[RMDB]
RNA sequence: GGGAACGACUCGAGUAGAGUCGAAAACCGAGACCGUACGCGGUCUCGGAGCUGUUCGGUGACGAACAGCACGAACACUACGGUGUUCGAGCGAUAACGUGAGUUAUCGCAAGUCAAGCGUGAGCUUGACACUUAACACUACGGUGUUAAGAACCUACGCGGUGACGCGUAGGAGCGGUCUACGUGAGUAGACCGCAGCCUGUGCUUCGGCACAGGCAGCCGCUGGGAUUGCGGAUUAUAAAUCGAACGACAACUUCGGUUGUCGAACGGUGCCAUUCGUGGCACCGAAAAGAAACAACAACAACAAC
Reactivity to DMS in 0.01 (KOAc 150mM, MgCl2 10mM, bicine 150mM(pH8.5), 24C), signal-to-noise 1, nucleotides 027 to 266: c000c000g000a010g020a030c020c000g030u000a100c170g030c010g040g020u010c000u010c010g000g000a050g000c020u000g010u000u000c030g020g020u000g000a090c000g000a010a020c010a000g000c020a130c040g000a000a030c000a000c000u000a130c150g010g010u000g000u000u000c010g030a160g000c010g000a000u000a000a020c020g020u000g010a260g010u000u000a000u000c030g000c000a050a060g010u000c010a010a000g000c010g000u010g000a270g000c000u000u000g010a000c000a050c000u000u000a040a010c000a000c010u010a110c160g030g010u000g000u010u000a020a000g010a260a210c010c000u000a000c010g010c010g010g010u000g000a160c000g000c000g000u000a000g000g000a090g040c000g010g010u000c000u020a000c000g000u020g000a300g020u000a000g010a010c010c000g030c010a020g000c000c010u020g000u010g000c000u000u020c190g000g000c020a010c000a010g020g020c020a040g020c000c000g010c000u000g010g020g010a010u010u010g010c000g010g000a070u000u000a000u020a000a000a000u000c060g000a030a150c020g020a010c000a020a000c010u000u010c150g030g010u000u000g010u010c010g010a060a170
Reactivity to 2A3 in 0.01 (KOAc 150mM, MgCl2 10mM, bicine 150mM(pH8.5), 24C), signal-to-noise 5, nucleotides 027 to 266: c000c000g000a000g010a010c000c010g040u050a030c260g020c020g140g000u000c000u000c010g000g000a010g000c000u000g000u000u010c000g000g050u070g040a030c010g000a000a000c000a000g030c000a000c020g000a000a000c000a000c010u070a040c270g140g000u010g010u010u000c010g020a050g010c000g000a000u000a000a010c030g080u090g100a120g030u030u000a000u000c000g000c030a020a040g010u000c000a000a010g000c020g050u130g100a030g010c010u000u010g000a000c010a020c000u000u000a000a000c000a000c010u050a030c250g130g000u000g000u000u000a000a000g010a020a000c000c000u000a000c000g000c000g010g040u070g040a030c000g000c000g000u000a000g000g000a010g000c000g000g000u000c000u000a010c000g110u090g190a090g010u020a000g000a000c000c000g000c000a000g000c010c000u000g000u010g010c010u040u090c240g100g000c000a000c000a000g000g000c000a000g060c000c010g000c010u020g010g030g040a050u140u250g000c010g000g020a020u130u150a100u140a040a020a020u060c040g010a080a110c010g010a010c000a010a010c010u050u070c160g150g000u020u010g010u010c000g000a050a040